[RMDB]
RNA sequence: GGGAACGACUCGAGUAGAGUCGAAAAGAUAUGGAGCGUGAACUACGCUGAAACAUGGCUGAUGACCAAGGCUCGGAAACGAGCCUUGCAAGGCCAUGGAGUACGGCGCACGCUCCUAAGUCAAAGGUCCCAGUUACGUUCGCGUAACUGGGACCAAGAUCUGUCUUAUCUUCGGAUAAGACAGAUCAAAAGAAACAACAACAACAAC
Reactivity to DMS in 0.01 (KOAc 150mM, MgCl2 10mM, bicine 150mM(pH8.5), 24C), signal-to-noise 1, nucleotides 027 to 156: g000a160u010a110u010g010g000a030g030c000g030u010g020a070a300c030u020a120c030g020c000u000g000a260a250a230c020a010u000g000g010c010u000g020a200u020g000a120c300c010a040a020g020g000c000u040c000g020g000a080a120a200c010g040a000g000c030c020u000u000g050c010a020a240g000g000c000c000a010u010g000g000a140g000u000a270c190g000g040c000g010c010a030c040g000c010u000c000c000u000a030a000g000u000c050a060a190a230g030g000u000c000c010c000a060g020u000u010a000c020g040u000u020c300g020c050g010u000a020a020c000u000g000g000g090a000c010c000a000a000
Reactivity to 2A3 in 0.01 (KOAc 150mM, MgCl2 10mM, bicine 150mM(pH8.5), 24C), signal-to-noise 3, nucleotides 027 to 156: g040a010u080a030u100g000g000a000g000c010g000u010g030a100a060c110u190a060c290g000c020u040g010a000a010a010c000a000u000g010g000c000u050g060a210u090g000a110c030c010a000a000g000g000c000u000c000g000g020a050a060a040c020g000a000g000c000c020u000u000g010c000a040a070g020g000c000c010a000u010g010g000a010g000u030a030c150g010g000c000g000c000a000c000g030c000u000c000c000u000a010a000g010u000c020a080a000a040g000g000u000c010c000c000a000g000u000u000a000c020g020u030u070c300g000c000g120u000a000a000c000u000g000g010g010a000c000c000a000a000